RNA sequence: GGGAACGACUCGAGUAGAGUCGAAAAAAAUUAAACUGCCUCGCACCGCCGUACUCAUUUUUACCUCGAGUAUGGUGGCCGUGGAAUGGUGGUUUUUUAUGCAGUCGGGAAUGAAAGCAGCUGUAAUUUUGACAAGUGUUUUCGAACACUUGUCAAAAAAAGAAACAACAACAACAAC
Reactivity to DMS in 0.01 (KOAc 150mM, MgCl2 10mM, bicine 150mM(pH8.5), 24C), signal-to-noise 2, nucleotides 027 to 126: a050a020a020u060u010a000a010a020c040u000g010c020c000u000c030g010c050a300c000c000g000c030c010g010u000a000c000u010c010a170u020u030u050u030u020a110c200c220u000c150g000a010g000u000a000u010g000g030u000g000g020c270c040g010u000g000g010a030a010u060g000g060u000g010g000u000u000u000u020u010u010a090u010g010c060a090g000u010c050g000g000g000a130a060u020g000a050a040a090g010c030a140g000c050u000g000u020a050a110u000
Reactivity to 2A3 in 0.01 (KOAc 150mM, MgCl2 10mM, bicine 150mM(pH8.5), 24C), signal-to-noise 3, nucleotides 027 to 126: a000a000a000u050u030a010a000a000c000u000g000c000c010u010c010g000c000a000c000c000g010c000c000g010u000a000c000u010c020a060u000u040u100u160u240a220c080c110u130c160g000a000g000u000a020u010g010g000u000g000g000c010c070g000u010g070g100a120a050u190g000g000u000g000g000u060u000u000u000u000u050a150u080g020c000a000g020u090c070g020g020g120a040a110u150g100a190a060a060g000c020a020g020c010u020g040u130a040a120u040